About this RNA: The record gives the reactivity of an RNA of 207 nucleotides to 2A3 and DMS. For 2A3, 2,311 sequencing reads were counted. The data come from the RNA Mapping Database (RMDB), library OK3TST.
RNA sequence: GGGAACGACUCGAGUAGAGUCGAAAAUGUGGUGCUGAUGGAAAACCAGUCAUUGAGGGCGAUUUUAAGGAUUAUUUCGGUGAUGAAGACAUCAUUGAAUUUGAAGGAGAGGAAUACCAUUGCGCUUGGACAACUGUGCGCGAUGAGAAACCGCUGACAGCGGAUAGAGAUUCGUCUCUAUCCGCUGAAAAGAAACAACAACAACAAC
Reactivity to 2A3 in 0.01 (KOAc 150mM, MgCl2 10mM, bicine 150mM(pH8.5), 24C), signal-to-noise 4, nucleotides 027 to 156: u110g010u030g000g000u020g000c040u020g040a100u060g020g000a000a040a020a080c040c010a030g100u080c060a080u060u080g030a050g000g020g020c020g030a020u040u020u020u170a090a040g030g000a020u040u040a100u040u160u070c030g000g000u000g020a010u020g020a150a070g110a070c020a030u010c000a010u000u060g030a060a050u070u030u140g060a030a010g040g000a010g020a010g020g020a070a020u090a090c040c010a010u010u030g000c020g010c000u050u070g070g000a050c060a240a100c130u070g010u030g040c010g000c010g000a010u010g010a000g010a030a030a010c050c040g030c090u070g010a020
Reactivity to DMS in 0.01 (KOAc 150mM, MgCl2 10mM, bicine 150mM(pH8.5), 24C), signal-to-noise 2, nucleotides 027 to 156: u010g030u000g030g040u000g010c010u000g000a120u010g010g030a070a080a070a080c040c020a130g010u000c060a110u000u010g030a110g020g010g020c030g000a100u000u010u000u010a040a110g010g020a170u000u000a100u010u000u000c040g000g000u000g000a040u000g020a020a180g020a260c020a040u000c010a020u000u000g010a050a070u010u010u010g010a060a110g010g000a120g010a110g000g020a090a110u000a090c000c030a050u000u000g010c000g000c020u000u000g030g000a070c260a030a090c060u000g020u000g020c000g030c000g010a030u000g010a120g000a060a060a090c040c050g000c020u000g010a210